Source: RMDB library OK1LIB, as collected in RNAgym. Chemical mapping of a 177-nucleotide RNA with 2A3 and DMS.
RNA sequence: GGGAACGACUCGAGUAGAGUCGAAAACGUCAGAGGACGAAGUCGGUCCAUCUGCGGUAAUAGACCGACAUAGAGUUCGAAGCAGAACGAACAACCGCAGACACACGAUUGGAGUGUGAAUGAGAGAGCUCACGUAGCGAUUCGUCGCUACGUGAGCAAAAGAAACAACAACAACAAC
Reactivity to 2A3 in 0.01 (KOAc 150mM, MgCl2 10mM, bicine 150mM(pH8.5), 24C), signal-to-noise 2, nucleotides 027 to 126: c030g000u070c070a150g110a210g230g030a010c010g000a000a000g000u000c000g000g000u030c000c000a100u000c000u040g000c060g000g000u000a000a000u020a070g000a030c000c000g000a000c040a040u140a000g140a000g000u000u020c000g020a080a030g190c070a000g120a040a010c060g010a100a010c000a020a020c000c010g000c000a000g040a000c010a000c000a000c000g060a080u000u300g280g000a220g070u020g000u000g020a010a100u160g000a070g060a020g000a020
Reactivity to DMS in 0.01 (KOAc 150mM, MgCl2 10mM, bicine 150mM(pH8.5), 24C), signal-to-noise 1, nucleotides 027 to 126: c020g020u020c000a110g000a220g000g000a140c000g000a200a110g050u000c000g000g020u000c000c160a190u000c020u000g050c120g000g000u000a040a160u000a160g000a060c020c000g040a030c050a060u000a180g000a300g000u020u010c020g000a150a040g020c110a120g000a000a110c000g020a000a010c180a070a060c000c040g000c000a000g000a070c060a000c000a000c000g000a210u000u090g000g000a200g000u000g000u000g000a170a000u030g000a020g000a180g000a140
For DMS, 1,335 sequencing reads were counted. 2A3 adducts were read by reverse transcription with SuperScript II with manganese. The reactions ran in a buffer of 150 mM KOAc, 10 mM MgCl2 and 150 mM bicine (pH 8.5), at 24 C. For 2A3, 1,491 sequencing reads were counted.